[RMDB]
This 177-nucleotide RNA was probed chemically with 2A3 and DMS. The reactions ran in a buffer of 150 mM KOAc, 10 mM MgCl2 and 150 mM bicine (pH 8.5), at 24 C. DMS adducts were read by reverse transcription with MarathonRT. Values cover nucleotides 27 to 126.

RNA sequence: GGGAACGACUCGAGUAGAGUCGAAAAUUGGCAUGGGCCCUAGGAAAAGUUAUCUUUUUUCUUUAACAGUCUGUAACCCUGGAAACGAAUUAUUCGGAGAUAGGGUUUAAUGAUUGGUAGAGCGUCAAGAUCCUUACUGUUUCGACAGUAAGGAUCUAAAAGAAACAACAACAACAAC
Reactivity to 2A3 in 0.01 (KOAc 150mM, MgCl2 10mM, bicine 150mM(pH8.5), 24C), signal-to-noise 1, nucleotides 027 to 126: u140u010g020g060c060a040u030g050g120g070c000c000c000u010a030g000g100a000a130a000a000g040u040u040a190u120c100u000u040u000u100u030u000c000u000u040u000a060a000c000a000g000u020c000u000g150u170a000a000c000c000c010u020g040g000a070a010a000c000g010a000a010u250u150a300u300u000c010g000g000a070g000a090u090a000g000g000g000u010u000u000a050a020u030g010a000u000u000g010g030u060a040g000a020g050c030g160u120c000a030
Reactivity to DMS in 0.01 (KOAc 150mM, MgCl2 10mM, bicine 150mM(pH8.5), 24C), signal-to-noise 4, nucleotides 027 to 126: u020u000g000g030c040a110u020g020g000g000c010c010c030u000a080g000g000a050a060a060a090g000u040u040a070u020c000u000u020u010u010u000u020c000u000u000u000a040a050c010a020g000u000c000u000g010u010a020a010c000c000c000u000g000g000a220a060a030c010g000a020a210u020u010a130u010u000c000g030g000a020g000a300u030a000g010g000g000u000u010u000a080a040u000g010a000u010u000g010g000u010a020g000a020g000c280g020u010c120a040